[RMDB]
RNA sequence: GGGAACGACUCGAGUAGAGUCGAAAAGUGUUGAAAGAGCAAGUGGGAGAGUAUUCAUUGUGAACCUUUUGAAAAGUGUCUGAUUUGUUAAGCCGGAGCACGGCCAGUUUACAUUCGCAGCAUUGCACCUCUUUGCUUGUACCACAAUAGAAAAAUCCUCAAAUAGUCAGUUCGCUGACUAUUUGAGAAAAGAAACAACAACAACAAC
Reactivity to DMS in 0.01 (KOAc 150mM, MgCl2 10mM, bicine 150mM(pH8.5), 24C), signal-to-noise 2, nucleotides 027 to 156: g040u000g030u000u000g000a160a080a180g000a170g010c020a040a060g040u000g010g030g000a190g030a180g020u000a100u000u000c060a080u000u010g020u010g000a060a070c070c010u000u000u000u000g010a070a080a090a060g020u000g030u000c030u000g010a120u000u000u010g010u020u020a070a120g000c000c030g020g020a180g000c120a070c060g010g000c050c020a060g010u000u000u010a030c060a100u000u000c090g000c020a130g000c000a040u010u000g010c040a090c080c010u000c040u000u000u010g000c020u010u000g020u000a100c040c050a070c050a030a100u000a120g010a030a090a060a090a170u000c040
Reactivity to 2A3 in 0.01 (KOAc 150mM, MgCl2 10mM, bicine 150mM(pH8.5), 24C), signal-to-noise 3, nucleotides 027 to 156: g020u040g030u070u040g070a060a060a040g030a020g010c020a040a050g030u050g020g030g010a010g010a020g020u030a100u030u070c020a010u000u090g020u030g060a090a100c000c030u070u100u050u120g080a080a100a030a050g030u030g030u020c010u010g030a070u070u080u100g040u070u050a060a000g020c000c010g030g010a070g100c150a020c070g030g000c030c020a000g040u000u010u080a010c020a020u010u070c060g000c040a020g020c010a040u020u120g020c040a040c020c050u070c000u070u030u090g000c010u030u030g030u030a030c000c020a030c020a070a060u090a080g080a030a080a000a000a040u090c030
This 207-nucleotide RNA was probed chemically with DMS and 2A3. The data come from the RNA Mapping Database (RMDB), library OK3TST. The RNA was probed in 150 mM KOAc, 10 mM MgCl2 and 150 mM bicine (pH 8.5) at 24 C. The DMS profile rests on 3,085 reads. DMS adducts were read by reverse transcription with MarathonRT.